[RMDB]
RNA sequence: GGGAACGACUCGAGUAGAGUCGAAAAGAUAUGGAUCGUCGGUACAGCAACAGCCUACUUCGGAAACGAAGUAGGACAUGCUGACCGCGAUCCUAAGUCAAACCACUGGACGUUCGCGUCCAGUGGAGUGGGUUGCCAUGUUCGCAUGGCAACCCACAAAAGAAACAACAACAACAAC
Reactivity to 2A3 in 0.01 (KOAc 150mM, MgCl2 10mM, bicine 150mM(pH8.5), 24C), signal-to-noise 1, nucleotides 027 to 126: g010a020u070a010u170g030g050a000u020c060g300u120c110g060g030u200a300c030a020g030c030a090a120c060a210g050c010c000u020a010c020u010u010c000g030g090a060a020a060c050g020a000a030g000u010a000g000g010a000c010a030u000g000c000u020g020a000c020c010g010c050g010a000u000c000c000u000a020a010g030u000c090a110a090a160c020c020a000c020u020g040g000a000c010g060u130u090c300g040c000g100u000c020c020a010g010u000g000g000a050
An RNA of 177 nucleotides, treated with 2A3 and read out base by base. For 2A3 the reverse transcriptase was SuperScript II with manganese. As a SHAPE reagent, 2A3 marks flexible, mostly unpaired nucleotides at the ribose 2'-OH.